[RMDB]
RNA sequence: GGGAACGACUCGAGUAGAGUCGAAAAGAUAUGGAGCUGCCCGUAGCUAGGGUAUCGGAAACGAUACUCCUUGGACCUACUCAGCUCCUAAGUCAAACGCAAUAAGACGUUCGCGUCUUAUUGCGAAGGAGAAUCACAUGUUCGCAUGUGAUUCUCCAAAAGAAACAACAACAACAAC
Reactivity to 2A3 in 0.01 (KOAc 150mM, MgCl2 10mM, bicine 150mM(pH8.5), 24C), signal-to-noise 1, nucleotides 027 to 126: g000a000u020a020u080g000g000a010g020c020u020g020c150c250c190g040u000a030g060c000u000a010g000g000g000u000a000u000c000g040g000a000a030a000c030g000a000u000a000c060u270c020c020u000u040g020g150a250c000c000u000a010c000u000c000a000g000c010u050c000c000u010a010a000g030u000c040a120a030a140c020g030c000a010a000u000a000a000g000a000c020g020u090u040c300g060c020g130u000c020u010u000a000u000u010g000c000g020a030a020
Reactivity to DMS in 0.01 (KOAc 150mM, MgCl2 10mM, bicine 150mM(pH8.5), 24C), signal-to-noise 1, nucleotides 027 to 126: g010a000u000a050u000g000g000a000g000c000u000g000c300c230c300g010u010a000g010c000u000a090g000g000g000u000a000u000c000g010g000a020a020a020c000g020a000u000a000c000u000c020c030u010u000g050g010a130c180c000u000a000c010u020c000a010g000c000u000c000c000u000a000a100g000u000c030a140a110a240c020g010c000a010a000u000a000a010g000a000c000g040u010u000c300g010c030g010u010c000u000u000a000u010u000g040c010g000a000a050